Conditions: 150 mM KOAc, 10 mM MgCl2 and 150 mM bicine (pH 8.5), 24 C. Chemical mapping of a 177-nucleotide RNA with DMS and 2A3.
RNA sequence: GGGAACGACUCGAGUAGAGUCGAAAACUAUUUAUAGACAGAACAGUGGAAAACGUAUAUCGCUAUAAACCUUAUACUCCGAAUCUUCCAGUCGUACAAUUCCACAUAGGCGAGGCAUAAGCGAAAGAAAUCAUAUGGCUUUCGAGCCAUAUGAUUUAAAAGAAACAACAACAACAAC
Reactivity to DMS in 0.01 (KOAc 150mM, MgCl2 10mM, bicine 150mM(pH8.5), 24C), signal-to-noise 4, nucleotides 027 to 126: c020u010a050u040u010u020a100u030a030g020a060c120a110g000a070a030c090a100g010u010g000g020a040a060a040a100c080g010u000a030u020a050u000c070g000c020u010a060u030a090a050a120c110c050u000u000a040u010a070c060u000c050c030g030a040a050u020c040u000u010c050c010a090g000u000c050g020u010a040c130a040a130u010u010c010c020a030c050a050u010a060g000g000c050g010a070g010g010c030a060u010a040a050g010c040g010a050a080a090g010
Reactivity to 2A3 in 0.01 (KOAc 150mM, MgCl2 10mM, bicine 150mM(pH8.5), 24C), signal-to-noise 4, nucleotides 027 to 126: c010u030a080u040u150u010a120u060a030g050a020c040a060g060a150a010c000a030g050u090g060g040a070a110a030a010c000g010u020a050u010a010u150c020g010c030u020a040u080a160a020a040c000c010u090u020a050u040a110c030u000c020c010g010a040a070u040c030u050u000c040c020a020g040u060c010g000u040a030c020a020a050u060u000c010c040a020c020a070u050a030g040g000c030g010a030g010g030c020a030u020a110a020g000c040g080a020a060a020g120
It was measured as part of the RMDB library OK1LIB. For 2A3, 4,627 sequencing reads were counted.